[RMDB]
RNA sequence: GGGAACGACUCGAGUAGAGUCGAAAAAGCCGAUGACGUCUCGUUAUCAGUGAGAUGUGGAAGCCAUUCUUUUCGAAAAUCAUCACAAUUCUCCAAUUUUCCAAUUUCAUCCAUUAAAUCCAUUAUCCCGCGAUAUUUACUUCGGUAAAUAUCGCGGAAAAGAAACAACAACAACAAC
Reactivity to 2A3 in 0.01 (KOAc 150mM, MgCl2 10mM, bicine 150mM(pH8.5), 24C), signal-to-noise 2, nucleotides 027 to 126: a000g060c050c020g100a120u040g050a020c040g050u050c020u030c050g140u130u150a140u140c100a050g110u020g130a000g000a030u050g010u050g080g060a050a020g010c030c010a070u120u000c030u120u150u030u060c050g040a040a050a050a040u020c060a050u020c010a030c020a110a120u030u000c000u000c010c000a000a000u000u010u050u000c030c000a000a080u000u000u060c030a110u020c040c000a030u040u100a090a080a020u000c040c020a030u060u110a120u300c000